[RMDB]
RNA sequence: GGGAACGACUCGAGUAGAGUCGAAAAGGGGUCUUCUUGGAUUUACAAAGUCGAAGGAGAGCAACAGCCUGAAGCCUCCACGGGACAUGCUCUCCCGAAGCCUUUGUUGUCAGAAGACGGAGGCACCCAAAGCAGUCACCGUUCGCGGUGACUGCAACUAUACCAAUGCGUUCGCGCAUUGGUAUAGAAAAGAAACAACAACAACAAC
Reactivity to 2A3 in 0.01 (KOAc 150mM, MgCl2 10mM, bicine 150mM(pH8.5), 24C), signal-to-noise 3, nucleotides 027 to 156: g090g010g000g010u020c010u030u040c040u090u230g180g020a060u240u300u020a020c010a010a000a010g000u010c020g050a050a000g000g010a000g010a010g000c010a020a090c050a130g070c010c000u050g030a110a040g040c000c010u040c040c000a030c000g020g000g020a060c020a050u040g000c000u000c000u010c000c000c010g070a030a010g020c000c020u020u020u000g010u000u020g010u020c020a020g020a060a000g000a020c010g000g000a010g000g000c040a080c000c000c020a080a040a010g000c000a000g000u010c000a000c020c020g040u090u130c290g000c020g100g000u000g000a000c000u000g000c000a000a000
Reactivity to DMS in 0.01 (KOAc 150mM, MgCl2 10mM, bicine 150mM(pH8.5), 24C), signal-to-noise 1, nucleotides 027 to 156: g000g000g050g030u010c000u010u010c020u010u000g010g030a100u010u020u000a040c080a000a020a060g020u000c000g040a200a080g000g020a020g010a050g030c040a030a080c090a210g000c000c000u010g060a050a100g000c040c010u000c010c020a300c090g040g030g030a080c050a300u000g000c010u000c000u000c000c020c020g000a130a080g010c030c010u010u040u000g010u040u000g010u000c040a050g040a050a040g020a040c040g010g040a060g050g030c030a060c010c000c000a050a110a140g000c010a030g010u000c000a010c000c000g000u000u000c300g080c060g000g020u040g010a010c010u010g010c030a010a040
The record gives the reactivity of an RNA of 207 nucleotides to 2A3 and DMS. 2A3 adducts were read by reverse transcription with SuperScript II with manganese. It was measured as part of the RMDB library RNAMAK. For 2A3, 2,551 sequencing reads were counted.